[RMDB]
Source: RMDB library OK2TST, as collected in RNAgym. Chemical mapping of a 177-nucleotide RNA with 2A3 and DMS. High DMS reactivity at an A or C suggests that its Watson-Crick edge is free. The RNA was probed in 150 mM KOAc, 10 mM MgCl2 and 150 mM bicine (pH 8.5) at 24 C. 2A3 adducts were read by reverse transcription with SuperScript II with manganese. For 2A3, 3,214 sequencing reads were counted. For DMS the reverse transcriptase was MarathonRT.

RNA sequence: GGGAACGACUCGAGUAGAGUCGAAAAGUUCUUGUGUGUGCAUACAAGCACUGGGAGAUGAAGUGGAUGGUCUUGAAGCUUGAUAGAGGACCUGAGGUGCCUCAGGUAAGGCUAGACACACCAAGGCCAUUGGCAACUACUUCGGUAGUUGCCAAUGAAAAGAAACAACAACAACAAC
Reactivity to 2A3 in 0.01 (KOAc 150mM, MgCl2 10mM, bicine 150mM(pH8.5), 24C), signal-to-noise 3, nucleotides 027 to 126: g010u060u040c010u030u020g040u010g000u000g000u000g120c040a070u080a230c030a050a020g010c030a050c100u040g050g060g010a140g000a070u150g070a180a060g090u100g070g070a040u060g050g020u010c030u030u040g030a070a030g030c030u050u000g020a030u090a110g070a070g000g040a010c000c000u010g020a040g030g100u270g140c020c020u010c010a010g040g020u030a050a020g030g000c010u010a020g040a020c020a000c000a000c030c000a010a000g010g020c000
Reactivity to DMS in 0.01 (KOAc 150mM, MgCl2 10mM, bicine 150mM(pH8.5), 24C), signal-to-noise 5, nucleotides 027 to 126: g010u000u000c010u000u000g010u010g020u010g020u000g020c090a160u010a100c090a040a030g000c030a070c120u000g010g000g000a090g020a060u010g010a070a120g030u010g010g010a080u000g020g000u000c010u000u000g000a160a110g010c040u000u000g010a240u000a030g000a060g000g000a040c010c000u010g000a060g000g020u010g020c180c000u000c010a010g010g000u000a040a070g000g000c000u000a050g000a090c040a020c040a050c060c010a010a020g000g010c040